[RMDB]
RNA sequence: GGGAACGACUCGAGUAGAGUCGAAAAGCACUAGGAGAAGCACUGGGAGGUCUUCUCAGUAACAACACUAAAGUAAUUGCUAUUUUUCCAGCCUGUGGAACCACAGAAGUGACUGUAACUAAAAUUAACUUACGAGGCAAUUCGUUGCCUCGUAAGUAAAAGAAACAACAACAACAAC
Reactivity to 2A3 in 0.01 (KOAc 150mM, MgCl2 10mM, bicine 150mM(pH8.5), 24C), signal-to-noise 1, nucleotides 027 to 126: g030c010a010c060u000a050g100g090a080g000a040a000g030c080a000c050u030g000g010g070a050g000g110u060c040u080u000c010u020c030a030g010u030a030a020c040a000a000c030a020c080u120a140a090a020g130u040a000a210u070u120g000c040u030a080u060u070u000u000u000c000c040a020g070c010c010u000g000u040g090g070a070a100c110c000a010c000a010g080a130a010g060u030g110a060c040u110g040u090a040a000c070u040a010a010a100a150u300u130a040
Reactivity to DMS in 0.01 (KOAc 150mM, MgCl2 10mM, bicine 150mM(pH8.5), 24C), signal-to-noise 1, nucleotides 027 to 126: g000c040a090c160u010a080g010g000a040g020a050a000g000c160a030c020u030g000g000g000a110g020g020u030c040u000u000c020u020c000a090g020u000a120a080c110a090a130c090a060c110u000a020a100a140g010u000a090a090u010u010g020c010u000a050u000u000u000u000u000c020c010a050g000c020c040u000g020u000g000g020a080a100c060c030a020c000a050g020a090a080g080u000g020a020c100u000g000u030a080a110c080u020a050a010a070a090u000u000a100